Structure probing data (2A3 and DMS) for a 207-nucleotide construct. The data come from the RNA Mapping Database (RMDB), library ARCHII.

RNA sequence: GGGAACGACUCGAGUAGAGUCGAAAAAAGGGGCUGUUAAAAGCAGCUAACCCCUAGUGGCCUCAGUCGAUAGGGCUGAGAGACUGCGACACUGUCAAAUUGCCGGGAACUCCUGCUAAGCUGUUGAUACCGCUGACUCAGGGAAACCUUAGCUCAGGUACGUUAUAACCUUCGGGUUAUAACGUACAAAAGAAACAACAACAACAAC
Reactivity to 2A3 in 0.01 (KOAc 150mM, MgCl2 10mM, bicine 150mM(pH8.5), 24C), signal-to-noise 2, nucleotides 027 to 156: a050a020g040g000g020g000c040u060g010u100u030a060a110a070a000g030c000a000g020c010u050a070a080c000c010c000c000u020a060g010u010g030g030c020c000u010c010a010g020u030c000g130a300u300a250g170g020g050c000u000g000a000g010a010g030a030c000u020g010c010g050a040c040a020c090u130g040u130c030a040a110a170u160u070g000c010c010g040g000g040a060a060c030u020c010c000u020g000c010u040a040a040g020c020u000g020u030u060g030a060u080a070c000c030g000c020u010g000a020c020u000c040a010g030g000g000a010a090a050c000c000u040u080a020g000c060u050c070a020g060
Reactivity to DMS in 0.01 (KOAc 150mM, MgCl2 10mM, bicine 150mM(pH8.5), 24C), signal-to-noise 1, nucleotides 027 to 156: a100a070g010g000g030g070c000u000g000u000u010a100a050a130a300g010c050a030g020c010u000a130a110c020c000c020c000u000a110g050u000g040g000c040c020u000c000a000g040u000c000g000a200u000a140g040g000g010c000u020g010a030g010a100g000a060c000u000g020c040g000a070c050a050c050u010g030u000c050a090a120a140u000u000g000c010c050g000g010g020a040a140c060u000c010c020u000g000c070u000a070a120g020c000u000g000u000u000g010a190u000a080c070c010g000c010u000g000a130c130u000c050a020g000g000g040a150a160a100c000c000u000u000a060g020c020u000c050a050g000